Structure probing data (2A3 and DMS) for a 177-nucleotide construct. The DMS profile rests on 1,366 reads. Reactivities are given for positions 27 through 126.

RNA sequence: GGGAACGACUCGAGUAGAGUCGAAAAUGGUAUGUUAUCGAUGCUGCAGGUAAAACCUUGGGAAGACUUUCUUCAGAGGUGGCAAAGAUCUUGCGCGGUAAGCAUAAGGUAACUUACACACCUCACGACAAAUAGCAGUCUUCGGACUGCUAUUUGUAAAAGAAACAACAACAACAAC
Reactivity to 2A3 in 0.01 (KOAc 150mM, MgCl2 10mM, bicine 150mM(pH8.5), 24C), signal-to-noise 1, nucleotides 027 to 126: u150g000g000u030a000u040g020u030u000a010u000c020g020a020u020g000c030u040g020c030a020g050g150u120a050a090a060a090c010c000u020u050g250g130g030a010a030g060a110c070u280u300u000c020u140u000c020a000g000a010g000g000u070g000g060c000a020a020a110g080a100u090c030u030u020g000c040g070c040g040g000u080a070a020g000c000a000u030a140a000g000g000u000a020a020c000u010u020a000c140a010c030a000c050c010u070c010a050c070g130
Reactivity to DMS in 0.01 (KOAc 150mM, MgCl2 10mM, bicine 150mM(pH8.5), 24C), signal-to-noise 2, nucleotides 027 to 126: u000g020g020u000a010u000g000u000u000a020u000c010g010a030u000g030c030u010g020c020a060g020g030u000a050a060a110a050c010c000u000u000g000g010g000a020a030g010a160c250u000u000u000c000u000u000c040a300g000a020g000g020u000g000g010c110a080a030a100g010a080u000c040u000u000g010c020g040c110g030g000u010a090a080g020c000a020u000a050a060g010g000u000a020a010c010u000u000a020c030a100c090a060c030c000u000c120a110c240g010